[RMDB]
RNA sequence: GGGAACGACUCGAGUAGAGUCGAAAAAGUCAUUCGCUGCGACGCUGCGGCAGUGUUUGGCGGCUGCAAGGGUGUGCUGCUUGGGUCUUUCACCAUCACGUCCAACACGCCGCCUGCUGUUGCCAGCGGCUGGCGUGAGUUUCGACUCACGCCAGCCAAAAGAAACAACAACAACAAC
Reactivity to 2A3 in 0.01 (KOAc 150mM, MgCl2 10mM, bicine 150mM(pH8.5), 24C), signal-to-noise 6, nucleotides 027 to 126: a000g130u090c040a090u170u100c040g050c120u070g020c050g030a020c040g000c010u000g000c000g010g020c070a010g000u020g020u110u170u130g000g010c000g000g030c030u050g000c090a200a280g040g000g000u030g010u040g030c100u030g040c030u180u170g090g000g030u110c050u050u210u120c140a110c020c000a010u150c010a000c010g030u000c010c010a040a010c020a000c080g010c000c000g000c000c000u000g000c020u050g010u000u010g030c090c000a010g000c020
Reactivity to DMS in 0.01 (KOAc 150mM, MgCl2 10mM, bicine 150mM(pH8.5), 24C), signal-to-noise 2, nucleotides 027 to 126: a090g000u070c140a120u010u040c130g030c160u020g010c020g060a040c000g000c040u000g000c000g000g040c070a010g010u040g000u000u000u020g000g020c000g010g020c040u020g040c210a080a220g030g000g030u010g000u000g000c060u000g010c160u060u040g020g000g000u060c130u000u010u020c150a010c300c000a010u000c010a060c040g000u000c000c000a060a070c130a090c170g030c010c000g000c000c150u000g000c010u000g090u000u000g010c250c040a000g010c130